[RMDB]
An RNA of 177 nucleotides, treated with 2A3 and DMS and read out base by base. The reactions ran in a buffer of 150 mM KOAc, 10 mM MgCl2 and 150 mM bicine (pH 8.5), at 24 C. 2A3 adducts were read by reverse transcription with SuperScript II with manganese.
RNA sequence: GGGAACGACUCGAGUAGAGUCGAAAACGCAAUUCAAUGAUUGGGCGGAGAUUUCAGACGGUAGGAUCGCCAGCCUGGCGACAGAGGACAGCGCAGCGGCGCACAGCCACAAUGCUGUGAGGGCCUCCGGCCAAUCAUAGUUCGCUAUGAUUGGCCGAAAAGAAACAACAACAACAAC
Reactivity to 2A3 in 0.01 (KOAc 150mM, MgCl2 10mM, bicine 150mM(pH8.5), 24C), signal-to-noise 2, nucleotides 027 to 126: c070g040c030a040a150u180u130c020a040a150u150g030a100u100u090g030g070g000c000g080g020a040g000a040u050u150u200c050a070g030a120c040g020g100u080a040g020g120a160u000c010g020c030c000a060g050c040c070u060g030g000c020g000a000c010a040g060a030g030g000a020c030a050g000c050g000c050a010g040c000g070g030c000g000c020a070c050a080g010c020c000a070c050a120a120u270g010c010u020g000u010g010a110g030g150g000c010c020u010c020
Reactivity to DMS in 0.01 (KOAc 150mM, MgCl2 10mM, bicine 150mM(pH8.5), 24C), signal-to-noise 3, nucleotides 027 to 126: c110g010c120a080a050u020u000c150a120a100u000g000a090u020u010g000g010g020c020g010g010a050g000a060u020u020u000c060a090g010a100c120g010g040u020a060g010g010a080u000c050g000c000c030a120g010c120c110u010g010g000c020g000a080c160a100g020a090g000g000a020c040a030g010c030g000c050a100g020c110g000g020c090g020c140a050c090a130g000c030c090a090c170a090a120u010g010c010u000g000u010g000a070g010g000g000c040c000u000c040